[RMDB]
RNA sequence: GGGAACGACUCGAGUAGAGUCGAAAAGAUAUGGACACACUUCGAUAAGCUGCUGUCGGAAACGACAGGCAGCUUUUGACGAAGGAGUCCUAAGUCAAACACUGGCACGGUUCGCCGUGCCAGUGAACAAACCGUCUCAGUUCGCUGAGACGGUUUGAAAAGAAACAACAACAACAAC
Reactivity to DMS in 0.01 (KOAc 150mM, MgCl2 10mM, bicine 150mM(pH8.5), 24C), signal-to-noise 2, nucleotides 027 to 126: g000a030u000a300u010g010g010a050c000a030c140a200c000u000u000c000g020a160u000a030a010g010c000u000g010c000u000g000u020c020g010g010a140a060a120c000g020a030c010a020g030g040c010a000g000c010u000u000u000u000g010a120c100g050a020a020g020g010a090g000u000c000c000u010a000a120g010u000c040a160a040a250c020a000c000u010g000g010c000a010c000g040g010u000u030c240g040c010c010g020u000g000c000c000a000g010u000g010a060a150